[RMDB]
RNA sequence: GGGAACGACUCGAGUAGAGUCGAAAAAUACUUCUCAGGAUGGCGCGUUGCAGUCCAACAAGAUCCAGGGACUGUACAGAAUUUUCCUAUACCUCGAGUCGGGUUUGGAAUCUAAGCUUGACUCGCUAAAACUUUACGUGGUUCGCCACGUAAAGAAGUAAUAAGACCACUUCGGUGGUCUUAUUACAAAAGAAACAACAACAACAAC
Reactivity to 2A3 in 0.01 (KOAc 150mM, MgCl2 10mM, bicine 150mM(pH8.5), 24C), signal-to-noise 3, nucleotides 027 to 156: a000u120a060c050u040u080c030u020c040a070g060g010a050u060g030g030c010g020c070g200u180u050g000c010a000g020u000c000c000a040a110c040a110a170g090a210u100c090c080a050g020g020g000a000c000u000g000u010a000c000a010g110a100a110u030u030u060u090c000c010u080a130u090a220c030c040u000c030g000a000g000u010c000g000g000g000u000u010u020g020g030a090a050u040c040u060a090a000g020c000u020u040g000a000c000u010c010g000c020u080a070a040a030a080c000u000u000u000a000c000g000u000g020g000u030u050c130g020c070c000a010c010g000u000a000a000a000g000a010a010
Reactivity to DMS in 0.01 (KOAc 150mM, MgCl2 10mM, bicine 150mM(pH8.5), 24C), signal-to-noise 1, nucleotides 027 to 156: a090u000a040c040u000u020c020u010c010a090g060g040a090u010g030g010c090g070c140g020u040u020g000c020a110g010u000c020c020a080a210c010a110a190g020a110u010c030c050a120g000g040g010a040c020u000g070u000a110c070a130g020a070a090u000u000u000u000c040c000u000a050u010a130c020c040u000c010g020a030g030u000c030g000g000g030u000u000u000g000g020a200a180u010c030u000a060a050g010c030u010u000g000a050c010u010c000g070c080u010a020a050a140a100c000u000u000u000a010c000g050u010g000g000u000u000c300g050c000c010a020c000g010u000a010a010a010g000a040a110

Chemical mapping of a 207-nucleotide RNA with 2A3 and DMS. For DMS, 2,076 sequencing reads were counted. 2A3 adducts were read by reverse transcription with SuperScript II with manganese. Values cover nucleotides 27 to 156.